RNA sequence: GGGAACGACUCGAGUAGAGUCGAAAAGGUCAUCCUUCACAGGCUCGUGUGGAAGUCCUGCUCGGGGCGGAAGCAUUAAAACCAUUCGAGCUAGUCAAUGCGUGGCGUGUCUCUCCGCAGCGUGUUGUGUAUGAGAGUGGAUUCGUCCACUCUCAAAGAACACUUUACAGUUCGCUGUAAAGUGUUCAAAAGAAACAACAACAACAAC
Reactivity to DMS in 0.01 (KOAc 150mM, MgCl2 10mM, bicine 150mM(pH8.5), 24C), signal-to-noise 2, nucleotides 027 to 156: g010g020u010c060a110u010c000c040u000u010c070a110c110a200g040g000c000u010c010g000u000g020u000g000g010a140a150g020u000c060c070u000g040c230u000c080g020g020g010g040c030g040g000a210a190g010c050a140u000u000a030a080a130a160c030c030a070u000u010c020g000a030g000c020u000a070g020u000c010a040a060u020g010c010g030u000g000g000c060g040u020g020u010c040u000c030u000c060c030g000c060a110g010c010g010u010g000u000u020g040u000g000u010a170u000g010a020g000a040g040u010g020g000a090u000u010c300g020u000c000c000a010c000u000c010u000c000a010a060a100
Reactivity to 2A3 in 0.01 (KOAc 150mM, MgCl2 10mM, bicine 150mM(pH8.5), 24C), signal-to-noise 5, nucleotides 027 to 156: g070g040u130c040a120u160c070c020u100u130c070a090c020a100g060g000c000u010c020g010u020g000u030g020g030a060a050g020u040c000c030u060g060c060u060c100g060g000g000g000c030g010g020a040a020g030c010a030u080u240a070a080a040a080c020c010a020u040u080c020g000a000g000c040u050a040g110u040c030a030a040u060g010c020g040u050g020g000c030g060u040g040u010c030u000c010u030c090c010g020c040a040g010c030g010u020g000u020u010g030u020g030u030a110u120g000a000g000a000g000u000g000g010a010u020u080c190g070u000c020c000a000c000u010c010u000c000a000a000a000

This 207-nucleotide RNA was probed chemically with DMS and 2A3. Conditions: 150 mM KOAc, 10 mM MgCl2 and 150 mM bicine (pH 8.5), 24 C. For DMS the reverse transcriptase was MarathonRT. Source: RMDB library M2RFPK, as collected in RNAgym. The DMS profile rests on 4,771 reads. 2A3 adducts were read by reverse transcription with SuperScript II with manganese. High DMS reactivity at an A or C suggests that its Watson-Crick edge is free.